[RMDB]
RNA sequence: GGGAACGACUCGAGUAGAGUCGAAAAUUCAACAGUGAGGCUCAAUCAGGGAAAUGUCUUUAGAGAAGGUGAGAUUUGUGCUGGGCUUCAAGAGAAGGAUGAGAAGAUGAGUUGGCUUAAGCACAGGCCUGAAAAACGUAUUCGUACGUUUUUCAGGAAAAGAAACAACAACAACAAC
Reactivity to 2A3 in 0.01 (KOAc 150mM, MgCl2 10mM, bicine 150mM(pH8.5), 24C), signal-to-noise 3, nucleotides 027 to 126: u070u010c020a030a030c010a040g050u030g060a020g020g010c020u010c080a020a050u050c020a030g010g000g140a010a070a080u130g010u060c010u060u120u080a110g020a000g010a090a000g030g030u050g020a100g010a060u070u060u110g030u030g020c020u050g000g000g060c000u070u050c050a030a020g060a000g040a100a010g080g040a060u100g030a040g020a060a030g020a040u090g030a030g050u060u080g050g000c010u060u060a070a000g030c000a010c030a020g030g060
Reactivity to DMS in 0.01 (KOAc 150mM, MgCl2 10mM, bicine 150mM(pH8.5), 24C), signal-to-noise 4, nucleotides 027 to 126: u010u000c070a080a100c120a080g010u000g010a060g010g010c050u000c060a060a070u000c060a090g000g000g000a050a070a090u010g010u000c020u010u000u000a080g010a120g010a070a060g000g020u000g010a090g010a120u000u010u000g030u000g020c060u000g000g010g010c030u010u000c070a050a080g010a090g010a060a060g020g010a070u010g000a120g000a090a060g000a050u000g010a050g020u000u000g010g000c030u000u000a050a050g020c080a040c080a080g000g010

Background:
Structure probing data (2A3 and DMS) for a 177-nucleotide construct. For DMS, 4,808 sequencing reads were counted. For DMS the reverse transcriptase was MarathonRT.